[RMDB]
RNA sequence: GGGAACGACUCGAGUAGAGUCGAAAAUUAGUUUUACCCUACUGAUGGCGUGUCAUUGUAAUAGUAAUUGAACUUAGUACGAGAGGAACCGUUCAUUCACGUAAUUGGUAUUUACAUCUGUUUGAUACUCGAUAUGCAAGUUCGCUUGCAUAUCGAGAAAAGAAACAACAACAACAAC
Reactivity to 2A3 in 0.01 (KOAc 150mM, MgCl2 10mM, bicine 150mM(pH8.5), 24C), signal-to-noise 1, nucleotides 027 to 126: u050u010a000g090u000u120u040u170a030c010c000c000u000a010c000u020g010a000u000g070g010c010g030u010g090u050c110a130u090u220g110u060a140a160u020a190g170u070a020a060u050u100g020a010a000c000u000u000a000g000u040a000c010g000a010g010a010g110g000a000a000c000c000g000u000u000c000a010u060u030c000a010c020g010u020a000a000u020u010g000g000u030a000u060u080u070a080c060a050u070c020u100g150u060u110u090g030a040u060a060
Reactivity to DMS in 0.01 (KOAc 150mM, MgCl2 10mM, bicine 150mM(pH8.5), 24C), signal-to-noise 2, nucleotides 027 to 126: u000u020a100g000u010u000u000u010a300c010c000c010u020a070c020u000g000a020u000g000g010c070g000u000g030u000c190a070u020u000g000u000a100a050u000a080g050u000a030a030u000u010g000a010a010c000u000u020a050g010u010a140c050g020a260g000a160g010g000a120a090c150c290g010u000u000c000a030u000u000c000a020c040g040u000a110a050u010u010g000g020u000a000u000u030u000a110c140a030u030c120u000g010u000u000u000g000a130u020a160
Chemical mapping of a 177-nucleotide RNA with 2A3 and DMS. DMS adducts were read by reverse transcription with MarathonRT. For DMS, 985 sequencing reads were counted. The RNA was probed in 150 mM KOAc, 10 mM MgCl2 and 150 mM bicine (pH 8.5) at 24 C. For 2A3 the reverse transcriptase was SuperScript II with manganese.